[RMDB]
Record summary
This 207-nucleotide RNA was probed chemically with 2A3 and DMS. The DMS profile rests on 2,761 reads. DMS (dimethyl sulfate) methylates the pairing face of unpaired adenines and cytosines. Reactivities are given for positions 27 through 156. The data come from the RNA Mapping Database (RMDB), library OK3TST. Reactivities are rounded to 0.1 and cut off at 0 and 3. The RNA was probed in 150 mM KOAc, 10 mM MgCl2 and 150 mM bicine (pH 8.5) at 24 C.

RNA sequence: GGGAACGACUCGAGUAGAGUCGAAAAGUCUCAGGUGAGCAGAGGGAUGACUUUGAGUUCUGUCCUUUGUCCUGUACCCAUUUGCAUUGCCAAGGUGAAGUUCAGCAGAACUGUUUUAGGGUAAAGAUCUUGAAGUCCACAAGGAGUUUCCUUGUGAGUCCUAUAGCUGGUUCGCCAGCUAUAGGACAAAAGAAACAACAACAACAAC
Reactivity to 2A3 in 0.01 (KOAc 150mM, MgCl2 10mM, bicine 150mM(pH8.5), 24C), signal-to-noise 1, nucleotides 027 to 156: g070u000c020u030c090a030g120g040u200g090a040g050c030a020g000a060g010g060g040a040u090g020a060c020u090u100u170g060a100g070u100u060c100u090g140u080c000c020u000u040u050g060u120c000c000u070g060u130a110c000c000c060a040u100u070u120g070c050a070u050u140g010c020c030a110a040g000g020u050g040a040a020g010u070u140c080a070g030c060a040g030a060a020c000u000g040u000u200u140u160a040g010g000g000u060a110a160a020g030a040u100c030u050u030g040a070a030g020u010c050c050a030c010a010a000g040g020a110g170u130u300u180c020c010u040u000g010u010g020a030
Reactivity to DMS in 0.01 (KOAc 150mM, MgCl2 10mM, bicine 150mM(pH8.5), 24C), signal-to-noise 1, nucleotides 027 to 156: g000u000c000u000c030a060g020g000u000g010a090g040c030a090g020a170g010g000g020a100u010g030a060c000u000u000u010g030a120g020u010u000c050u020g010u000c050c020u000u000u000g010u000c020c000u010g010u000a160c050c020c060a180u020u000u000g030c050a160u000u000g010c090c030a110a100g000g030u000g020a100a040g000u000u000c030a190g000c070a110g010a050a090c040u000g010u020u010u010u000a060g000g020g020u000a030a070a050g000a060u000c010u010u000g010a040a090g020u000c040c020a000c000a040a060g010g040a300g000u000u000u000c000c000u010u000g020u010g020a130